[RMDB]
RNA sequence: GGGAACGACUCGAGUAGAGUCGAAAAGUCAGCUUGUUCGCAAGCUGACAAACUGGACACACCCACACCCAGGCGAAGCCGUGUCUAAAUGGGUGUGGGUAAAAAGGACACUGUUCGCAGUGUCCAAGGUAUUACCCGAGUUCGCUCGGGUAAUACCAAAAGAAACAACAACAACAAC
Reactivity to 2A3 in 0.01 (KOAc 150mM, MgCl2 10mM, bicine 150mM(pH8.5), 24C), signal-to-noise 2, nucleotides 027 to 126: g010u000c000a010g000c000u050u000g030u040u080c180g060c090a010a000g000c010u010g000a010c010a000a010a000c030u050g150g080a040c050a000c010a000c120c020c000a000c000a000c010c010c030a040g010g010c050g070a050a040g150c100c040g240u170g080u040c080u110a030a100a180u060g000g000g000u000g010u010g000g000g000u010a010a010a010a000a000g010g000a000c000a000c010u010g030u030u010c190g000c090a010g010u000g000u000c000c000a000a000
Reactivity to DMS in 0.01 (KOAc 150mM, MgCl2 10mM, bicine 150mM(pH8.5), 24C), signal-to-noise 2, nucleotides 027 to 126: g010u020c000a000g010c010u000u000g010u000u020c140g030c010a000a000g020c000u000g000a000c010a000a030a090c080u010g010g000a130c120a140c180a080c000c000c000a000c020a010c030c010c000a070g030g020c250g000a090a030g000c070c100g040u010g010u010c050u020a050a230a120u030g030g010g010u000g010u000g000g000g010u000a000a030a030a140a000g000g000a060c020a010c010u010g010u000u010c130g030c010a020g000u000g000u000c000c000a010a000